[RMDB]
RNA sequence: GGGAACGACUCGAGUAGAGUCGAAAAGUAGUGGAGAUAGUUGAUCAAGUGAUACCGCUAGCUAAAUUUCAUAGGAAUCAAGCACUCCCAAAACCAAUGAGUAAUUCUUGCGAUUUACCUAGGGACGUAAGAUAGCUCAGUUCGCUGAGCUAUCUUAAAAAGAAACAACAACAACAAC
Reactivity to 2A3 in 0.01 (KOAc 150mM, MgCl2 10mM, bicine 150mM(pH8.5), 24C), signal-to-noise 5, nucleotides 027 to 126: g110u180a020g030u100g080g050a060g000a140u170a090g060u010u060g040a120u050c050a200a160g030u020g050a030u070a060c080c080g050c110u040a070g010c020u140a100a140a150u090u060u040c030a040u080a070g220g030a060a040u030c010a040a000g100c020a040c030u010c000c030c000a030a050a050a080c030c010a110a090u090g040a040g080u060a010a090u060u020c040u050u150g060c120g060a060u050u020u100a050c010c010u040a040g030g000g060a020c050g010
Reactivity to DMS in 0.01 (KOAc 150mM, MgCl2 10mM, bicine 150mM(pH8.5), 24C), signal-to-noise 6, nucleotides 027 to 126: g000u030a050g020u020g000g000a090g010a070u030a070g010u000u000g000a110u010c080a110a160g010u000g010a080u020a080c080c060g030c060u000a080g000c100u010a030a070a100u010u020u010c020a060u000a100g000g020a070a050u000c070a080a040g010c070a090c070u000c000c020c020a060a070a050a180c050c050a070a070u030g000a090g010u010a020a030u010u010c010u020u030g000c120g000a020u000u000u000a020c030c030u010a100g000g000g020a070c220g000